RNA sequence: GGGAACGACUCGAGUAGAGUCGAAAAGAUAUGGAAGAAACGGUACAAACGAAUGCGUGAACUACAAGUGAAGGUCGGAAACGACCUUCUCUUGCACGCACUAUUUGUACCGUUUCUUCCUAAGUCACAAAGAGUUUAGGUUCGCCUAAACUCUUUGAAAAGAAACAACAACAACAAC
Reactivity to DMS in 0.01 (KOAc 150mM, MgCl2 10mM, bicine 150mM(pH8.5), 24C), signal-to-noise 5, nucleotides 027 to 126: g010a030u010a300u000g000g000a010a000g000a010a000a000c000g010g010u000a010c000a020a030a050c190g010a100a090u000g000c000g010u000g000a090a040c140u040a300c010a000a010g010u000g000a020a010g010g010u000c000g010g000a100a080a260c010g010a020c000c000u000u000c000u000c000u000u000g000c000a010c010g010c000a000c050u000a220u000u000u000g010u000a000c000c000g020u000u000u000c000u000u000c010c000u010a000a060g000u000c050a240